Chemical mapping of a 177-nucleotide RNA with 2A3 and DMS. It was measured as part of the RMDB library TTRDEL. The 2A3 profile rests on 3,963 reads.
[RMDB]
RNA sequence: GGGAACGACUCGAGUAGAGUCGAAAAGAUAUGGAUCGCUCUCGAUAAGCCACGAUUCGGAAACGAAUCAUGGCUUUUGACGAGAGCAAUCCUAAGUCAAAGCUUAGCGUGUUCGCACGCUAAGCAACCCAUAAAACGACUUCGGUCGUUUUAUGGGAAAAGAAACAACAACAACAAC
Reactivity to 2A3 in 0.01 (KOAc 150mM, MgCl2 10mM, bicine 150mM(pH8.5), 24C), signal-to-noise 2, nucleotides 027 to 126: g020a010u020a010u070g000g010a010u020c020g000c000u000c000u030c010g110a190u090a300a000g020c020c000a000c030g010a000u020u010c010g000g030a020a030a020c000g000a000a010u010c000a010u010g000g000c020u010u010u030u040g040a030c010g000a000g010a000g050c000a000a010u000c010c000u010a060a030g020u020c060a100a110a070g000c000u000u000a000g010c000g000u000g020u020u030c180g040c130a000c000g000c000u000a000a010g000c020a000a000
Reactivity to DMS in 0.01 (KOAc 150mM, MgCl2 10mM, bicine 150mM(pH8.5), 24C), signal-to-noise 2, nucleotides 027 to 126: g000a020u000a260u000g010g000a010u000c070g010c000u000c000u000c000g000a120u000a050a030g000c000c000a010c050g000a000u000u000c000g000g000a070a060a160c000g000a000a000u010c000a040u000g000g000c000u000u000u010u000g020a180c050g020a030g000a010g030c000a010a000u000c010c000u010a010a130g020u000c010a100a130a190g010c000u000u000a010g000c020g030u010g010u000u000c270g020c010a000c000g000c000u000a000a000g030c010a020a040